[RMDB]
RNA sequence: GGGAACGACUCGAGUAGAGUCGAAAAUGAUGUUUGAUUAGCUCAUAAAUACUAAAUAAUGUUUGUAACUUAUAGUUACGUUUUUGGAAUUAACGUUGACAUAUUGUCAUUCAGUUUUCAAUGUUCAGUGUAGCAAGUAGUUCGCUACUUGCUACACAAAAGAAACAACAACAACAAC
Reactivity to 2A3 in 0.01 (KOAc 150mM, MgCl2 10mM, bicine 150mM(pH8.5), 24C), signal-to-noise 1, nucleotides 027 to 126: u040g060a020u110g070u040u060u060g030a140u120u040a020g020c000u020c060a080u130a110a100a000u080a100c030u100a060a000a090u240a070a000u150g050u130u150u050g000u040a000a000c000u130u210a170u070a300g000u000u000a000c000g000u040u000u100u040u120g090g030a050a000u050u010a060a040c100g010u020u010g000a000c020a050u100a100u050u200g030u000c010a030u080u040c040a010g000u000u000u040u060c020a030a000u160g070u040u020c020a000
Reactivity to DMS in 0.01 (KOAc 150mM, MgCl2 10mM, bicine 150mM(pH8.5), 24C), signal-to-noise 2, nucleotides 027 to 126: u000g010a050u000g000u000u000u000g010a140u010u000a060g010c060u000c060a070u020a090a050a070u010a100c000u000a030a070a020u000a060a110u010g020u000u020u000g010u000a010a010c020u000u020a120u000a110g020u000u000a000c020g010u010u000u000u040u000g000g000a050a070u000u000a050a110c210g010u000u020g010a020c040a080u000a080u000u010g010u000c050a020u000u010c120a050g020u000u010u010u010c040a090a070u020g010u000u000c090a130
Structure probing data (2A3 and DMS) for a 177-nucleotide construct. DMS adducts were read by reverse transcription with MarathonRT. The reactions ran in a buffer of 150 mM KOAc, 10 mM MgCl2 and 150 mM bicine (pH 8.5), at 24 C.